Notes
This 177-nucleotide RNA was probed chemically with 2A3 and DMS. In probing experiments dimethyl sulfate is read out at A N1 and C N3, which are open when not base-paired. For 2A3, 4,847 sequencing reads were counted. The reactions ran in a buffer of 150 mM KOAc, 10 mM MgCl2 and 150 mM bicine (pH 8.5), at 24 C.
RNA sequence: GGGAACGACUCGAGUAGAGUCGAAAAGUAACUAAGUUCGCUUAGUUACAAAACGUUCAACCAUUAUGGUCGGAAGUAGGUUUGAAACCGAAGGAACGCAUCAAAGUGCUCAGGUUCGCCUGAGCACCUGAACUGAUGAGUUCGCUCAUCAGUUCAGAAAAGAAACAACAACAACAAC
Reactivity to 2A3 in 0.01 (KOAc 150mM, MgCl2 10mM, bicine 150mM(pH8.5), 24C), signal-to-noise 4, nucleotides 027 to 126: g000u000a000a000c000u000a000a000g000u030u050c070g060c110u000u010a000g000u010u010a000c000a000a050a000a020c010g010u020u020c010a020a020c000c000a070u220u210a140u300g020g000u020c010g020g000a020a020g010u020a030g070g050u030u050u250g240a270a110a010c010c000g000a000a000g030g000a010a010c020g000c010a020u050c070a070a170a040g000u000g000c000u000c010a000g020g040u060u060c150g080c060c000u000g010a000g000c000a000c000
Reactivity to DMS in 0.01 (KOAc 150mM, MgCl2 10mM, bicine 150mM(pH8.5), 24C), signal-to-noise 3, nucleotides 027 to 126: g010u000a010a000c000u000a010a000g010u010u010c210g020c000u000u000a010g000u000u000a000c010a060a050a090a120c010g000u000u000c000a260a040c010c010a220u010u000a120u000g020g010u010c030g000g000a010a170g000u000a120g000g000u000u000u020g010a090a070a050c000c010g010a180a120g000g000a010a000c010g000c020a050u010c160a060a080a140g010u000g010c000u000c000a010g000g000u000u020c280g010c000c000u010g010a010g010c000a000c020